[RMDB]
RNA sequence: GGGAACGACUCGAGUAGAGUCGAAAAGCGCCAGCGUGCGUCGGGUCGAUCUUGUCGGUGCCGAGCCAGUCGGACGUCAGCACUGCGAGUGCCCCGGCCACCUGCUCGUUCGGCUCGUCUAACGUACUAUAGAUUGGGGGUUCGCCCCCAAUCUAUAAAAAGAAACAACAACAACAAC
Reactivity to DMS in 0.01 (KOAc 150mM, MgCl2 10mM, bicine 150mM(pH8.5), 24C), signal-to-noise 1, nucleotides 027 to 126: g000c080g020c300c090a070g020c140g030u010g010c160g020u000c030g010g010g000u000c000g010a040u000c020u000u000g010u020c070g010g010u000g000c020c000g000a080g000c020c010a180g020u000c150g040g010a110c060g010u000c050a060g010c020a050c010u000g020c030g000a000g030u000g000c140c020c020c000g000g000c000c010a030c010c010u020g030c060u000c140g000u000u000c020g010g000c000u000c000g000u010c060u010a080a130c060g000u000a120c070
Reactivity to 2A3 in 0.01 (KOAc 150mM, MgCl2 10mM, bicine 150mM(pH8.5), 24C), signal-to-noise 1, nucleotides 027 to 126: g050c000g000c080c070a020g000c050g080u040g020c110g010u000c000g000g000g070u040c060g040a150u070c060u020u060g220u280c050g020g020u010g000c010c000g020a030g020c040c040a130g290u230c150g000g000a100c010g240u010c020a020g070c010a000c020u000g000c000g010a010g000u050g020c000c000c000c060g000g010c000c000a000c010c010u010g000c000u020c050g020u020u000c000g010g000c020u020c000g020u000c070u090a100a020c000g050u050a020c050
The record gives the reactivity of an RNA of 177 nucleotides to DMS and 2A3. The reactions ran in a buffer of 150 mM KOAc, 10 mM MgCl2 and 150 mM bicine (pH 8.5), at 24 C. Reactivities are given for positions 27 through 126. For DMS, 1,666 sequencing reads were counted. For 2A3 the reverse transcriptase was SuperScript II with manganese. Source: RMDB library OK2TST, as collected in RNAgym.